[RMDB]
Record summary: The record gives the reactivity of an RNA of 177 nucleotides to 2A3 and DMS. Conditions: 150 mM KOAc, 10 mM MgCl2 and 150 mM bicine (pH 8.5), 24 C. For 2A3 the reverse transcriptase was SuperScript II with manganese. Source: RMDB library OK1LIB, as collected in RNAgym. Values are in units of 0.01, from 0 to 300, in steps of 10.
RNA sequence: GGGAACGACUCGAGUAGAGUCGAAAAGAAGAAGAUUAUCUAAGUCUAAGACCUUGUUUCAAACUAACAAGGGCGCAUGGAGGAAGGCCGGACCUCCAUACUUAGACACGCGCGAUCCGGCCAAGAAAUGAUAAAUCCAGUUCGCUGGAUUUAUCAUAAAAGAAACAACAACAACAAC
Reactivity to 2A3 in 0.01 (KOAc 150mM, MgCl2 10mM, bicine 150mM(pH8.5), 24C), signal-to-noise 6, nucleotides 027 to 126: g100a030a030g060a060a010g050a090u190u160a100u280c060u110a110a050g010u000c000u010a010a000g010a040c000c000u010u010g070u020u020u070c280a270a210a110c090u080a000a000c000a000a000g010g010g000c010g000c040a000u010g010g000a010g030g000a090a240g010g000c010c010g000g010a040c000c010u000c000c000a000u000a020c000u000u000a000g000a000c010a030c090g220c010g010c020g020a000u020c010c000g000g000c000c000a000a000g000a000a160
Reactivity to DMS in 0.01 (KOAc 150mM, MgCl2 10mM, bicine 150mM(pH8.5), 24C), signal-to-noise 4, nucleotides 027 to 126: g020a120a060g010a060a070g010a110u020u030a090u040c060u020a110a110g020u010c010u000a010a010g020a230c010c000u000u000g000u000u000u010c180a110a100a110c220u070a010a010c000a000a000g000g000g000c200g000c190a050u000g010g010a000g000g000a160a080g010g000c010c010g020g020a050c000c010u000c020c010a000u000a010c020u000u000a010g010a000c040a050c230g020c140g020c170g010a030u000c000c000g010g030c010c020a050a020g000a070a080